[RMDB]
RNA sequence: GGGAACGACUCGAGUAGAGUCGAAAAGAUAUGGAUGUAGAGGCGAUAAGUCCGAACAUCGGAAACGAUGUGGACUUUUGACGCCUCCUACAUCCUAAGUCAAAAGUCUUGAGUUCGCUCAAGACAAGAUCAAUUGAGGGUUCGCCCUCAAUUGAUCAAAAGAAACAACAACAACAAC
Reactivity to 2A3 in 0.01 (KOAc 150mM, MgCl2 10mM, bicine 150mM(pH8.5), 24C), signal-to-noise 1, nucleotides 027 to 126: g020a000u050a000u100g000g000a000u000g000u030a000g010a010g040g000c000g040a150u050a300a020g000u030c000c000g040a120a060c010a000u020c030g010g000a040a030a000c010g000a000u000g090u120g020g000a000c000u060u070u110u150g300a230c010g000c000c010u000c000c000u020a000c000a000u000c010c000u000a030a010g010u000c000a030a000a070a290g000u000c010u000u020g020a010g000u000u160c300g050c110u010c010a000a010g010a030c010a000a040
Reactivity to DMS in 0.01 (KOAc 150mM, MgCl2 10mM, bicine 150mM(pH8.5), 24C), signal-to-noise 2, nucleotides 027 to 126: g000a020u000a200u010g000g010a000u000g010u000a010g010a010g000g020c010g030a150u010a020a020g040u000c000c010g030a110a140c000a020u000c010g000g010a100a040a110c010g020a000u000g020u010g000g020a020c000u010u000u010u000g000a200c070g020c000c000u000c160c040u000a000c030a010u000c010c000u000a000a080g000u020c030a150a090a140a140g000u000c000u000u000g010a020g020u000u030c300g000c000u000c010a000a000g010a010c020a020a060
Structure probing data (2A3 and DMS) for a 177-nucleotide construct.
For 2A3 the reverse transcriptase was SuperScript II with manganese.
The reactions ran in a buffer of 150 mM KOAc, 10 mM MgCl2 and 150 mM bicine (pH 8.5), at 24 C.
The DMS profile rests on 1,796 reads.